[RMDB]
RNA sequence: GGGAACGACUCGAGUAGAGUCGAAAAGGGAGAUCCGAGCAGAGGCAUAGCGAACUGCGCACGGCGAAGCCUUGAGGGAAGGCCGUAGGACCCGGGUUCGAUUCCCGGCAGCUCCACCGAAGGGCCACGAUCACUGAUAGUUCGCUAUCAGUGAUCGAAAAGAAACAACAACAACAAC
Reactivity to DMS in 0.01 (KOAc 150mM, MgCl2 10mM, bicine 150mM(pH8.5), 24C), signal-to-noise 4, nucleotides 027 to 126: g000g000g000a050g000a040u020c010c020g010a100g020c050a040g000a070g000g000c060a130u010a090g000c090g000a090a060c060u010g000c030g010c100a070c050g000g030c050g010a160a240g000c030c020u000u020g000a220g010g000g000a100a160g000g000c020c080g000u000a120g020g000a100c170c020c000g020g000g010u010u030c150g000a300u040u000c000c010c020g010g000c120a060g010c030u000c030c020a230c090c010g000a180a050g000g000g010c000c080a140
Reactivity to 2A3 in 0.01 (KOAc 150mM, MgCl2 10mM, bicine 150mM(pH8.5), 24C), signal-to-noise 4, nucleotides 027 to 126: g040g020g000a080g000a050u020c020c040g010a000g030c020a010g030a050g070g000c060a080u110a080g060c030g040a080a060c030u040g000c040g000c030a040c040g020g000c040g050a030a020g030c000c020u060u070g040a080g010g030g020a010a060g020g000c020c010g040u060a060g000g070a050c010c020c010g020g000g000u050u070c060g020a060u070u060c000c000c000g000g000c010a040g010c010u020c010c020a060c000c010g030a020a060g040g030g010c010c010a020
Structure probing data (DMS and 2A3) for a 177-nucleotide construct. The reactions ran in a buffer of 150 mM KOAc, 10 mM MgCl2 and 150 mM bicine (pH 8.5), at 24 C. For DMS, 6,055 sequencing reads were counted. Source: RMDB library OK1LIB, as collected in RNAgym. For DMS the reverse transcriptase was MarathonRT.